An RNA of 177 nucleotides, treated with DMS and 2A3 and read out base by base. The RNA was probed in 150 mM KOAc, 10 mM MgCl2 and 150 mM bicine (pH 8.5) at 24 C. Values cover nucleotides 27 to 126. The DMS profile rests on 1,010 reads.
RNA sequence: GGGAACGACUCGAGUAGAGUCGAAAAGAUAUGGAUCGUGAUACCUGCUGAUGACCUUUAUCGGAAACGAUAAAGCAAGGCAAGUAUCCGAUCCUAAGUCAAAACUCCUAGCCUUCGGGCUAGGAGAGAACUUUACCUGGUUCGCCAGGUAAAGUUCAAAAGAAACAACAACAACAAC
Reactivity to DMS in 0.01 (KOAc 150mM, MgCl2 10mM, bicine 150mM(pH8.5), 24C), signal-to-noise 1, nucleotides 027 to 126: g010a060u000a300u030g000g000a020u000c000g000u020g020a040u000a010c000c000u000g000c000u020g010a080u010g010a090c300c020u000u000u000a010u000c000g010g000a120a100a300c000g000a000u000a010a000a030g040c030a030a040g010g000c000a010a000g020u000a000u000c000c000g000a020u020c000c060u010a020a050g010u020c030a120a040a060a250c000u000c000c000u000a000g000c000c000u010u010c240g040g020g000c000u000a020g010g000a020g010a000
Reactivity to 2A3 in 0.01 (KOAc 150mM, MgCl2 10mM, bicine 150mM(pH8.5), 24C), signal-to-noise 2, nucleotides 027 to 126: g060a000u040a040u130g000g020a000u030c050g130u280g130a010u030a000c000c030u020g000c040u040g040a300u190g050a140c030c000u020u020u010a010u020c000g010g010a090a060a120c000g000a010u010a010a000a000g010c000a050a110g000g000c010a000a040g000u010a020u000c020c000g000a000u000c000c000u000a010a010g060u030c020a010a030a090a270c000u020c000c000u000a000g000c010c020u040u150c300g120g000g000c000u000a020g000g010a000g000a020
The 2A3 profile rests on 2,841 reads. DMS adducts were read by reverse transcription with MarathonRT.